RNA sequence: GGGAACGACUCGAGUAGAGUCGAAAAGUGAGAACGUUCGCGUUCUCACAAAUACUAAGACCGAAGCUUAGAUGGGCGACACUUCCCUUGGAAACGGCACAAAAAUGAUAGGUUUCGACCUAUCAAAGAUUGUGCUCGUAUUCGUACGAGCACAAUCAAAAGAAACAACAACAACAAC
Reactivity to 2A3 in 0.01 (KOAc 150mM, MgCl2 10mM, bicine 150mM(pH8.5), 24C), signal-to-noise 1, nucleotides 027 to 126: g010u020g000a010g000a000a000c000g000u010u080c150g040c020g060u020u000c040u000c000a010c000a000a000a000u050a010c010u030a000a030g050a020c000c070g100a090a010g000c010u080u060a040g010a110u150g060g050g020c020g100a020c000a020c060u010u000c000c010c000u010u050g060g010a150a040a000c020g050g030c090a010c040a060a100a060a000a050u080g010a020u000a010g000g000u000u030u090c150g070a010c000c010u000a000u000c010a000a020a000
Reactivity to DMS in 0.01 (KOAc 150mM, MgCl2 10mM, bicine 150mM(pH8.5), 24C), signal-to-noise 1, nucleotides 027 to 126: g020u010g000a000g000a010a010c010g020u000u020c160g020c010g010u000u000c000u000c000a000c000a030a060a050u000a160c090u000a070a090g020a110c030c040g000a160a070g000c030u000u000a010g000a070u020g000g020g000c020g000a120c110a050c050u000u000c000c000c000u010u000g010g000a040a050a110c030g000g040c050a050c090a030a040a040a070a100u000g000a010u000a000g030g000u000u000u010c240g000a020c000c000u000a000u000c010a020a080a050